[RMDB]
RNA sequence: GGGAACGACUCGAGUAGAGUCGAAAAGGAGGAGGAGAAAUAUAGCGCGCGAUCGGUCCUCCCACGCGCGUCGCGCGCUGAUAAGCGCGCGCGGAGGAUGAUUAAUAGAUAGCGCGCGGCCUGCUUCGGCAGGCCAAAAGAAACAACAACAACAAC
Reactivity to DMS in 0.01 (KOAc 150mM, MgCl2 10mM, bicine 150mM(pH8.5), 24C), signal-to-noise 1, nucleotides 027 to 135: g010g010a030g010g010a010g020g000a040g000a010a030a030u000a020u020a020g000c000g010c000g000c000g000a000u000c000g030g010u000c000c000u020c000c010c060a080c070g010c020g020c060g000u010c030g030c050g000c100g000c090u020g020a130u030a100a100g030c000g000c010g010c030g040c300g010g000a050g000g010a020u000g010a100u010u030a080a070u040a050g000a030u010a090g020c000g010c000g010c000g000g020c000c020u000g000c000u000u050c140g020g000c000a000g010g000c010c010a010
The record gives the reactivity of an RNA of 155 nucleotides to DMS. Values cover nucleotides 27 to 135. Source: RMDB library P90LIB, as collected in RNAgym. Conditions: 150 mM KOAc, 10 mM MgCl2 and 150 mM bicine (pH 8.5), 24 C.